RNA sequence: GGGAACGACUCGAGUAGAGUCGAAAAGUGGGAAGUGUGGUCUGGAACAGUGGUCACAGAUGCCAGUCCUAGAACUAGCUGCCUCAGAAUCACUGGGGGGCUUGCAAAGCACAGACAGGUGGAGGUUCUGGCUCCCACCCCUAACCCAGGGGACAGGUGUUAUACAACGUUUCGACGUUGUAUAACAAAAAGAAACAACAACAACAAC
Reactivity to DMS in 0.01 (KOAc 150mM, MgCl2 10mM, bicine 150mM(pH8.5), 24C), signal-to-noise 2, nucleotides 027 to 156: g010u000g010g000g060a070a130g010u000g040u010g000g030u000c020u000g010g030a200a090c020a220g000u000g030g010u000c060a230c050a070g000a130u000g020c050c020a070g030u000c000c030u000a130g010a040a150c010u000a110g010c010u000g020c000c010u000c030a060g010a160a110u000c160a090c040u000g010g000g020g050g020g000c050u010u000g000c110a050a100a160g040c050a180c050a110g010a110c090a080g010g000u000g010g000a060g020g000u000u050c010u000g000g000c010u000c010c000c030a080c010c030c000c020u000a030a190c020c010c020a140g010g020g020g030a130c030a070g010g020
Reactivity to 2A3 in 0.01 (KOAc 150mM, MgCl2 10mM, bicine 150mM(pH8.5), 24C), signal-to-noise 4, nucleotides 027 to 156: g020u020g010g020g000a110a170g070u010g000u010g090g030u000c000u040g050g060a080a070c040a160g100u050g090g020u020c020a010c000a030g080a030u120g000c000c000a000g010u050c000c000u050a040g050a120a060c050u010a010g010c000u220g300c010c000u030c000a090g070a300a150u200c080a150c230u010g000g010g000g000g020g000c000u000u020g000c060a030a080a030g080c030a010c010a030g280a090c050a070g090g080u030g020g070a020g030g000u180u120c010u010g010g020c000u040c010c010c000a040c000c000c000c000u020a060a060c000c010c050a010g010g010g000g010a020c030a030g110g030